This 177-nucleotide RNA was probed chemically with DMS and 2A3. 2A3 adducts were read by reverse transcription with SuperScript II with manganese. The reactions ran in a buffer of 150 mM KOAc, 10 mM MgCl2 and 150 mM bicine (pH 8.5), at 24 C.
RNA sequence: GGGAACGACUCGAGUAGAGUCGAAAAGUCACGUAUGGAUACGUUACGCCAUCCAGCUCAAUCUCACGGUCUGUUUUGAUAGUCGAGCCGAUUUUAAAGUACUCAUCAACACUGGUGUCGUGGAACACCACCUUUUUCAAUUCGUUGAAAAAGGUGGAAAAGAAACAACAACAACAAC
Reactivity to DMS in 0.01 (KOAc 150mM, MgCl2 10mM, bicine 150mM(pH8.5), 24C), signal-to-noise 8, nucleotides 027 to 126: g010u000c060a060c060g010u000a130u010g010g010a110u010a030c070g000u000u010a050c110g010c080c050a070u000c040c030a110g000c070u000c090a080a100u000c060u010c040a070c070g010g010u000c030u000g010u000u000u000u000g010a060u000a060g010u000c090g000a100g020c060c040g000a080u000u010u010u000a050a080a120g010u000a050c020u000c080a060u000c050a040a050c110a060c060u010g000g010u000g010u000c030g030u000g000g010a130a080c190a150
Reactivity to 2A3 in 0.01 (KOAc 150mM, MgCl2 10mM, bicine 150mM(pH8.5), 24C), signal-to-noise 8, nucleotides 027 to 126: g030u020c040a000c040g020u040a050u210g240g090a120u070a120c010g010u050u020a020c030g010c020c010a040u000c020c010a040g000c040u030c060a070a120u040c030u030c050a020c010g020g040u020c010u020g040u030u050u020u010g040a030u030a030g040u030c030g000a020g050c040c030g050a050u020u060u030u270a070a150a010g030u020a030c010u020c040a030u020c010a020a050c020a010c080u040g040g000u070g030u060c030g020u030g020g030a040a020c020a020